[RMDB]
RNA sequence: GGGAACGACUCGAGUAGAGUCGAAAAUAUAGCAUCGCUUUGAGAUUCUCCAUAGCUAUCAAGUCUUUAUACAAUGACAUGGAAAUAUCUGUGAAUACUUUAUACUUCUCCAACAUCGAUGCCUUAACAUCAUCGCCUACUUUAGCAUUGAAAAUACUGCAAUCUUUGGAUUCGUCCAAAGAUUGCAAAAAGAAACAACAACAACAAC
Reactivity to 2A3 in 0.01 (KOAc 150mM, MgCl2 10mM, bicine 150mM(pH8.5), 24C), signal-to-noise 1, nucleotides 027 to 156: u110a000u050a010g000c010a020u030c010g030c040u070u020u020g010a030g020a050u090u000c030u000c110c010a010u010a080g000c000u060a020u160c060a060a010g020u000c000u010u200u090a180u010a070c080a090a090u160g090a020c040a080u050g000g050a050a080a050u090a120u010c060u080g030u020g080a120a040u030a060c040u070u180u060a110u020a120c040u020u070c000u000c010c030a070a040c000a090u110c020g010a000u000g030c000c000u100u120a060a040c020a040u090c010a020u020c030g000c010c000u090a070c050u060u070u080a010g030c000a080u000u140g100a000a030a070a140u000a070c050

Record summary
Conditions: 150 mM KOAc, 10 mM MgCl2 and 150 mM bicine (pH 8.5), 24 C. This 207-nucleotide RNA was probed chemically with 2A3. Values cover nucleotides 27 to 156. The data come from the RNA Mapping Database (RMDB), library OK3TST.